[RMDB]
Overview
This 177-nucleotide RNA was probed chemically with DMS and 2A3. The 2A3 profile rests on 3,030 reads. Values are in units of 0.01, from 0 to 300, in steps of 10. The RNA was probed in 150 mM KOAc, 10 mM MgCl2 and 150 mM bicine (pH 8.5) at 24 C. It was measured as part of the RMDB library TTRDEL.

RNA sequence: GGGAACGACUCGAGUAGAGUCGAAAAGAUAUGGAGAAGGAACUACGGACUAAGUUCGAAGAACUCGGAAACGAGGGAGAACGAUGUCCGCCUUCUCCUAAGUCAAAGGUGUCCUUCGGGACACCAAGUUUUGACCUUAGUUCGCUAAGGUCAAAACAAAAGAAACAACAACAACAAC
Reactivity to DMS in 0.01 (KOAc 150mM, MgCl2 10mM, bicine 150mM(pH8.5), 24C), signal-to-noise 2, nucleotides 027 to 126: g000a050u010a300u000g010g000a000g000a020a000g030g000a110a010c160u030a300c040g000g000a010c010u010a220a260g010u000u000c010g020a090a160g030a180a190c010u000c010g000g030a130a050a110c010g000a040g000g000g000a040g000a030a030c010g000a150u010g000u000c000c000g000c000c010u000u000c000u010c000c010u000a000a050g010u010c030a080a080a050g020g010u000g030u000c000c010u000u020c140g010g010g000a010c000a010c000c000a010a020
Reactivity to 2A3 in 0.01 (KOAc 150mM, MgCl2 10mM, bicine 150mM(pH8.5), 24C), signal-to-noise 2, nucleotides 027 to 126: g020a020u100a050u140g020g000a020g000a010a040g040g010a110a050c110u200a090c300g000g010a010c010u060a110a060g030u030u000c070g040a300a010g000a050a060c000u010c010g040g020a060a050a060c000g010a000g000g010g000a040g010a000a000c020g030a010u110g000u010c000c000g000c000c000u000u030c000u000c000c000u000a020a000g000u020c060a110a040a030g000g000u000g000u000c020c000u030u030c300g100g000g000a020c000a000c010c000a000a000